[RMDB]
RNA sequence: GGGAACGACUCGAGUAGAGUCGAAAACUGCCCAGGGUCUCCUGGGUGACACAUGGCAGAGCCGGACUGAACUCCCAGUGUGCUCCAUGUCCCUGUGGCCCUCGCUGUCCCUCGGGAGGGGCUGGGGACGCAAAGAGAUUUUCGAAUCUCUUUGCGUAAAAGAAACAACAACAACAAC
Reactivity to 2A3 in 0.01 (KOAc 150mM, MgCl2 10mM, bicine 150mM(pH8.5), 24C), signal-to-noise 4, nucleotides 027 to 126: c020u060g000c010c010c000a010g140g030g170u080c090u030c150c000u010g000g000g010u000g000a010c000a000c000a070u130g050g000c040a010g010a030g090c030c050g030g110a040c030u050g050a100a060c020u060c040c040c030a030g040u090g040u080g130c010u000c030c010a060u130g030u040c010c000c010u100g040u160g100g010c000c010c010u040c070g080c070u050g030u050c010c000c000u020c020g050g010g020a030g010g010g030g000c020u030g000g000g000g010
Reactivity to DMS in 0.01 (KOAc 150mM, MgCl2 10mM, bicine 150mM(pH8.5), 24C), signal-to-noise 8, nucleotides 027 to 126: c100u000g010c010c000c000a030g000g010g010u010c120u010c010c000u000g000g010g010u000g010a060c060a060c100a110u010g010g010c100a070g000a140g010c040c140g010g010a080c080u000g010a100a110c090u000c040c020c050a100g020u010g010u010g010c050u000c030c060a070u010g000u000c010c010c060u000g010u010g010g000c010c010c020u000c080g010c090u010g000u000c010c040c000u000c060g000g010g010a050g010g010g010g010c010u000g000g000g000g000
This 177-nucleotide RNA was probed chemically with 2A3 and DMS. The data come from the RNA Mapping Database (RMDB), library OK2TRN. Conditions: 150 mM KOAc, 10 mM MgCl2 and 150 mM bicine (pH 8.5), 24 C. For DMS the reverse transcriptase was MarathonRT. Values cover nucleotides 27 to 126.